[RMDB]
RNA sequence: GGGAACGACUCGAGUAGAGUCGAAAAUGAAAGCGCGAACUCAGCCGAAAGGCACCGCGAAGAAAAACAGGAUGACGCGCAUCCCACAUCCAGCGGACUCACGCAGAGACGCGGAAGUGAAAAAAAACCUAACUAAGCAGUUCGCUGCUUAGUUAGGAAAAGAAACAACAACAACAAC
Reactivity to 2A3 in 0.01 (KOAc 150mM, MgCl2 10mM, bicine 150mM(pH8.5), 24C), signal-to-noise 2, nucleotides 027 to 126: u100g020a050a080a010g040c020g000c020g020a090a050c030u030c090a050g030c000c020g070a040a040a040g020g010c020a040c030c050g100c050g020a120a230g070a010a180a010a020a010c050a000g120g000a040u020g030a040c000g040c010g000c020a040u040c000c010c000a020c020a040u000c020c030a040g000c020g110g110a240c010u010c030a060c080g140c090a040g020a020g000a020c010g000c000g030g000a000a020g060u070g000a170a000a000a010a000a000a000a000
Reactivity to DMS in 0.01 (KOAc 150mM, MgCl2 10mM, bicine 150mM(pH8.5), 24C), signal-to-noise 2, nucleotides 027 to 126: u010g000a160a120a090g020c010g000c010g020a050a160c180u000c100a100g000c000c000g000a100a120a210g010g010c040a160c070c130g000c030g000a060a100g000a050a070a080a060a050c140a140g000g000a040u000g010a300c020g040c050g000c050a130u000c000c010c000a030c040a080u000c000c010a090g040c010g000g010a070c020u000c020a130c140g000c220a230g030a020g010a080c020g030c010g010g000a030a060g010u000g000a000a000a010a050a100a060a180a120